[RMDB]
RNA sequence: GGGAACGACUCGAGUAGAGUCGAAAAAUCAGGCCUCGCCUUAUAAACUACGGAAGCCUUGUGGCUCGCGUCUGCGACCACAUGCUGUUUGGACCCUUCGUCAAGUGCCACUAUGGAGGCACCAAGCACUAGAGAGGCUUUUCGAAGCCUCUCUAGUAAAAGAAACAACAACAACAAC
Reactivity to 2A3 in 0.01 (KOAc 150mM, MgCl2 10mM, bicine 150mM(pH8.5), 24C), signal-to-noise 2, nucleotides 027 to 126: a000u010c010a000g010g010c070c100u110c050g000c010c010u070u040a080u070a150a150a030c020u170a020c070g140g010a080a020g000c040c080u000u040g040u020g040g000c130u050c020g030c020g100u190c260u300g000c000g000a000c000c000a000c010a020u010g000c030u040g040u090u060u070g100g020a040c010c020c000u030u070c070g080u020c060a090a070g000u000g050c020c000a020c040u130a230u290g150g050a090g000g010c000a000c000c010a060a060g020c080
Reactivity to DMS in 0.01 (KOAc 150mM, MgCl2 10mM, bicine 150mM(pH8.5), 24C), signal-to-noise 3, nucleotides 027 to 126: a070u000c070a070g020g000c020c040u000c150g000c020c030u000u000a170u000a110a100a130c110u000a070c080g000g010a130a080g010c030c070u010u000g040u000g000g010c180u000c010g030c020g030u010c220u000g000c010g000a060c010c000a000c010a040u000g000c020u000g020u000u010u000g000g000a150c080c050c030u000u000c070g000u000c130a060a150g010u010g000c030c030a090c090u000a140u000g020g010a080g000g040c030a050c010c110a060a090g020c120

Chemical mapping of a 177-nucleotide RNA with 2A3 and DMS. Reactivities are given for positions 27 through 126. For 2A3, 1,085 sequencing reads were counted. DMS adducts were read by reverse transcription with MarathonRT. As a SHAPE reagent, 2A3 marks flexible, mostly unpaired nucleotides at the ribose 2'-OH.